[RMDB]
RNA sequence: GGGAACGACUCGAGUAGAGUCGAAAAAUCACUAGCCACCAUAAUGGCGCUAUCUUUCAACCAGCUAUCGCUUACGCAUUUCAGCAGUCUAACAUUUUUAAAGAGACUACAAUAUAUUCUCAUGGUAUCGAUUACACCUCUACCGAAUAGAGUAGGAACUGAGAAUGAAAUUCGUUUCAUUCUCAGUAAAAGAAACAACAACAACAAC
Reactivity to 2A3 in 0.01 (KOAc 150mM, MgCl2 10mM, bicine 150mM(pH8.5), 24C), signal-to-noise 5, nucleotides 027 to 156: a000u060c030a020c070u040a020g000c010c000a040c030c040a110u080a180a140u160g020g000c010g010c050u060a070u120c030u030u130u100c030a050a040c020c020a020g010c020u050a030u090c050g010c090u040u060a040c060g000c040a050u020u110u090c030a050g000c020a010g030u000c020u030a090a060c040a160u090u070u060u130u260a080a200a010g090a010g010a020c020u090a040c080a130a030u110a000u040a070u270u010c020u020c040a040u040g020g010u050a050u100c020g030a030u050u110a030c030a030c080c010u040c020u060a030c010c020g040a090a110u090a150g050a030g020u040a010g040g020a010
Reactivity to DMS in 0.01 (KOAc 150mM, MgCl2 10mM, bicine 150mM(pH8.5), 24C), signal-to-noise 3, nucleotides 027 to 156: a090u000c020a040c040u000a110g040c030c020a050c010c070a210u010a070a200u000g010g000c140g000c020u000a040u010c030u000u010u010c040a110a200c020c010a180g010c040u000a050u000c020g010c020u010u000a110c080g020c040a120u000u000u010c050a080g030c000a030g020u000c030u010a100a060c050a120u010u000u000u010u020a050a090a270g020a100g000a090c040u000a050c030a110a100u000a260u000a100u000u000c030u020c020a080u000g020g010u000a060u000c030g010a150u000u000a080c050a050c020c010u010c010u030a100c000c000g020a080a300u020a090g000a040g020u000a100g000g010a060

The record gives the reactivity of an RNA of 207 nucleotides to 2A3 and DMS.
The data come from the RNA Mapping Database (RMDB), library OK3TST.
2A3 adducts were read by reverse transcription with SuperScript II with manganese.
Conditions: 150 mM KOAc, 10 mM MgCl2 and 150 mM bicine (pH 8.5), 24 C.
The 2A3 profile rests on 4,742 reads.